[RMDB]
RNA sequence: GGGAACGACUCGAGUAGAGUCGAAAACGGUAUUGGUCAAGGCUAUACCGACAGCGCACCUUCAAAAGGUCGCUUAAUCCCCGGCCAAGCGCCGAAAUAUGAAUAGACACCGCUGGGCUGGUAGGGCAAAACAUGGCGAUCUUCGGAUCGCCAUGAAGAUUUCGAGUAUGUUCGCAUACUCGAAAUCAAAAGAAACAACAACAACAAC
Reactivity to DMS in 0.01 (KOAc 150mM, MgCl2 10mM, bicine 150mM(pH8.5), 24C), signal-to-noise 1, nucleotides 027 to 156: c070g000g070u000a060u000u000g080g000u000c040a110a110g030g070c030u010a120u000a040c020c000g000a060c070a010g030c030g000c100a040c000c020u010u020c210a020a090a180a160g020g030u000c000g030c040u010u000a040a140u030c030c010c000c030g060g020c030c030a110a080g020c090g000c040c050g000a040a060a080u030a270u000g000a150a150u000a090g000a220c050a050c050c010g050c070u000g000g030g050c000u000g000g000u000a050g000g000g010c070a010a110a120a180c000a000u020g000g010c000g020a010u000c000u010u040c280g040g070a060u000c020g000c000c000a000u010g010a010a110
Reactivity to 2A3 in 0.01 (KOAc 150mM, MgCl2 10mM, bicine 150mM(pH8.5), 24C), signal-to-noise 2, nucleotides 027 to 156: c000g000g020u010a020u100u240g040g020u110c080a120a130g130g000c000u010a010u010a020c010c000g030a040c050a010g000c000g010c020a020c020c010u050u130c060a070a100a040a020g000g000u000c010g000c000u010u000a020a030u020c000c010c000c000g020g000c000c020a060a020g000c040g000c070c060g100a030a070a020u290a080u100g100a090a080u060a070g040a040c030a010c030c010g030c030u020g030g040g000c020u010g000g070u080a080g020g050g000c060a000a000a040a080c000a020u000g000g000c000g020a010u010c000u040u050c140g040g000a000u000c000g000c000c000a000u000g000a000a000